[RMDB]
RNA sequence: GGGAACGACUCGAGUAGAGUCGAAAAGAUAUGGAUGGAUGGAAGCCUACUAGGUCGUUGAAAUCGGAAACGAUGGAGACCAUAGGAUAACAUCCAUCCUAAGUCAAAACCGUAGUUCGCUACGGAACGUGACUCGGUAGUUCGCUACCGAGUCACGAAAAGAAACAACAACAACAAC
Reactivity to DMS in 0.01 (KOAc 150mM, MgCl2 10mM, bicine 150mM(pH8.5), 24C), signal-to-noise 1, nucleotides 027 to 126: g000a030u000a300u000g000g000a030u000g000g030a000u000g040g010a140a170g000c000c000u000a000c300u000a110g030g020u000c000g090u000u000g020a110a140a030u000c000g000g000a070a060a100c000g030a000u000g000g000a170g010a000c000c000a150u000a010g000g000a010u000a200a150c000a000u000c000c000a030u000c020c000u000a000a060g000u010c040a080a120a110a050c000c000g000u010a000g000u000u000c270g030c000u000a000c070g000g000a070a010
Reactivity to 2A3 in 0.01 (KOAc 150mM, MgCl2 10mM, bicine 150mM(pH8.5), 24C), signal-to-noise 1, nucleotides 027 to 126: g000a030u140a000u190g010g000a010u000g000g000a010u000g040g010a260a240g050c000c000u030a060c120u160a170g040g000u030c010g150u280u020g010a030a010a030u030c000g020g000a040a070a020c040g000a000u010g030g010a030g000a000c000c020a010u000a000g000g010a010u020a030a000c000a000u000c000c000a020u020c000c000u000a000a000g000u010c010a000a020a100a120c000c020g000u010a000g000u030u070c300g010c120u000a000c020g030g030a040a030

The data come from the RNA Mapping Database (RMDB), library TTRDEL. The record gives the reactivity of an RNA of 177 nucleotides to DMS and 2A3. Values cover nucleotides 27 to 126. For DMS the reverse transcriptase was MarathonRT. Values are in units of 0.01, from 0 to 300, in steps of 10. Conditions: 150 mM KOAc, 10 mM MgCl2 and 150 mM bicine (pH 8.5), 24 C.